[RMDB]
An RNA of 207 nucleotides, treated with 2A3 and read out base by base.
For 2A3, 567 sequencing reads were counted.
The reactions ran in a buffer of 150 mM KOAc, 10 mM MgCl2 and 150 mM bicine (pH 8.5), at 24 C.
The data come from the RNA Mapping Database (RMDB), library RNAMAK.
RNA sequence: GGGAACGACUCGAGUAGAGUCGAAAAAAGGGUUCGCCCUUCAAACUGGGGUCGUAGCGGACGGACGCAGAUAGGGAGUUCUGAAGCCUCCACGGAACGAAGAACUGUAGUCCGGUACGCUACGACGGAGGCACCCACGCGGUUACUUCGGUAACAAUCCGUACUCUGAGUUCGCUCAGAGUACGGAAAAAGAAACAACAACAACAAC
Reactivity to 2A3 in 0.01 (KOAc 150mM, MgCl2 10mM, bicine 150mM(pH8.5), 24C), signal-to-noise 1, nucleotides 027 to 156: a000a000g200g000g020u290u270c170g080c000c020c000u140u200c200a300a280a100c110u080g020g000g120g000u000c000g000u000a010g020c010g000g000a030c000g000g000a000c030g000c000a000g040a100u300a060g030g000g130a150g030u000u000c000u050g030a100a000g150c000c000u000c050c020a030c000g010g000a010a010c050g000a060a050g000a120a000c000u000g000u100a300g020u020c000c030g000g040u100a030c020g000c000u000a000c010g000a000c000g000g000a000g000g000c000a000c010c010c010a010c100g060c060g070g060u000u020a000c000u050u100c240g100g000u000a000a040c010a050a090